This 207-nucleotide RNA was probed chemically with 2A3 and DMS. Source: RMDB library OK3TST, as collected in RNAgym. DMS adducts were read by reverse transcription with MarathonRT. As a SHAPE reagent, 2A3 marks flexible, mostly unpaired nucleotides at the ribose 2'-OH.
RNA sequence: GGGAACGACUCGAGUAGAGUCGAAAAGGGCUUGAACCAUCGCCCGAAUAAGAUGGAUGAUACAAGUCGACAUAGUACGCGACAUAGAACGUACUCAUUGAAGUGCGAAAGCACGAAGUCCGACGGGUCUGGGACGAUCAUCAGGCAAGACUUAGAAGCCUGCUAUAGGAUUCGUCCUAUAGCAGGCAAAAGAAACAACAACAACAAC
Reactivity to 2A3 in 0.01 (KOAc 150mM, MgCl2 10mM, bicine 150mM(pH8.5), 24C), signal-to-noise 2, nucleotides 027 to 156: g020g000g010c010u040u080g040a040a000c050c010a020u030c010g040c040c000c020g050a040a110u130a070a010g020a020u000g050g000a020u070g020a000u140a150c040a160a010g000u010c010g040a040c000a060u050a010g020u010a010c040g010c030g040a050c060a060u150a040g110a060a000c010g000u060a010c030u000c020a080u130u180g060a160a030g000u000g010c000g050a030a090a030g000c020a010c060g000a030a000g020u000c000c020g020a040c080g030g000g000u000c030u030g000g030g040a030c030g040a080u090c020a010u050c060a040g010g000c060a080a040g010a050c050u070u200a070g100a160a020
Reactivity to DMS in 0.01 (KOAc 150mM, MgCl2 10mM, bicine 150mM(pH8.5), 24C), signal-to-noise 1, nucleotides 027 to 156: g000g050g020c000u010u010g030a090a010c080c050a050u010c030g000c030c000c060g060a090a100u000a070a080g040a070u000g020g050a070u020g000a110u010a060c060a070a100g000u000c050g040a060c000a300u000a150g020u000a000c010g050c000g000a230c140a210u000a150g030a110a000c000g000u000a040c000u000c180a090u000u000g070a070a200g040u000g010c000g050a080a090a220g010c030a030c000g000a080a160g020u000c010c040g010a290c070g000g040g060u000c030u020g000g000g030a090c060g010a030u000c030a060u000c040a050g000g000c020a050a050g030a140c100u010u000a130g010a200a300